RNA sequence: GGGAACGACUCGAGUAGAGUCGAAAAAUAAAAUAGCACGAAGGUGCGUGAAGGGCAGUGGACAAAGCAAUGAAAAUUUGUUUUGCCGUGAGCUCUCUUUAAUAAACGACUUCUCCUUCCACUGAGCGUUUCGGUCGUCAUUCGUGACGACCGAAACAAAAGAAACAACAACAACAAC
Reactivity to 2A3 in 0.01 (KOAc 150mM, MgCl2 10mM, bicine 150mM(pH8.5), 24C), signal-to-noise 1, nucleotides 027 to 126: a000u250a090a080a050a050u180a000g120c080a010c090g080a150a020g100g040u150g000c010g000u000g080a040a120g000g020g000c100a060g000u060g020g040a120c000a000a020a000g000c000a000a000u070g020a120a110a120a060u050u000u000g000u000u000u000u000g040c000c010g010u000g000a020g000c000u000c000u010c040u050u090u040a100a130u180a150a090a000c010g100a080c110u120u000c000u000c020c010u010u000c060c040a130c090u060g000a000g020c050
An RNA of 177 nucleotides, treated with 2A3 and read out base by base. Conditions: 150 mM KOAc, 10 mM MgCl2 and 150 mM bicine (pH 8.5), 24 C. For 2A3 the reverse transcriptase was SuperScript II with manganese. For 2A3, 379 sequencing reads were counted.